[RMDB]
RNA sequence: GGGAACGACUCGAGUAGAGUCGAAAAGCGUACUACUAGAGCAAGAAGUAGAGCUUGGAUUUAUCUCUAGCGUGGAGCUCCCAAAUAGGAGCUCUCGGGUUGUCAGCUCUACGUAAGCUCUAGUAUCGCAAAAGGCCGCUGGUUCGCCAGCGGCCAAUCACAUACUCUACUUCGGUAGAGUAUGUGAAAAAGAAACAACAACAACAAC
Reactivity to 2A3 in 0.01 (KOAc 150mM, MgCl2 10mM, bicine 150mM(pH8.5), 24C), signal-to-noise 1, nucleotides 027 to 156: g000c020g060u060a020c070u000a000c000u010a010g010a000g020c040a100a020g040a090a050g010u010a010g010a010g000c060u090u220g120g050a120u300u280u030a130u060c070u000c090u110a130g150c070g110u240g050g000a010g010c010u040c030c010c030a180a300a100u300a090g000g000a000g000c010u000c020u020c020g000g000g040u010u020g020u020c000a000g000c000u000c000u000a000c000g000u020a000a000g000c000u000c000u000a000g000u000a000u000c000g000c000a000a110a000a050g000g010c000c050g010c020u000g000g080u010u020c200g050c140c010a010g000c000g000g000c000c000a000a020
This 207-nucleotide RNA was probed chemically with 2A3. The 2A3 profile rests on 675 reads. The RNA was probed in 150 mM KOAc, 10 mM MgCl2 and 150 mM bicine (pH 8.5) at 24 C.